[RMDB]
RNA sequence: GGGAACGACUCGAGUAGAGUCGAAAAGAUAUGGACCUUGUGCAGCGAUGAAAUAUAUCGGAAACGAUAUAUGGAGCUGUCACAUAGGGUCCUAAGUCAAAACGACGAACGGUUCGCCGUUCGUCGAUCAUUAGUCGUGCUUCGGCACGACUAAUGAAAAAGAAACAACAACAACAAC
Reactivity to DMS in 0.01 (KOAc 150mM, MgCl2 10mM, bicine 150mM(pH8.5), 24C), signal-to-noise 2, nucleotides 027 to 126: g000a020u000a090u000g000g020a010c010c040u000u020g050u000g010c000a010g020c000g030a110u010g040a060a090a020u000a000u000a000u000c010g020g020a030a020a110c000g010a020u020a020u000a010u000g020g010a010g010c000u000g020u000c040a030c040a300u020a300g010g000g010u000c000c020u000a010a070g000u000c010a060a070a110a300c010g020a010c000g000a000a020c000g000g010u000u010c300g000c000c010g020u000u010c010g000u000c010g000a030
Reactivity to 2A3 in 0.01 (KOAc 150mM, MgCl2 10mM, bicine 150mM(pH8.5), 24C), signal-to-noise 1, nucleotides 027 to 126: g010a010u020a020u030g010g000a000c020c000u130u230g040u090g020c020a020g000c000g300a300u000g000a020a020a010u000a010u000a000u010c010g000g000a040a000a020c000g010a000u010a000u000a000u010g010g000a020g000c010u010g050u300c000a000c030a040u210a060g190g030g010u030c000c010u000a040a000g000u010c000a070a020a090a180c020g000a010c000g000a000a010c000g010g000u060u110c300g140c080c010g000u030u000c020g010u010c000g020a010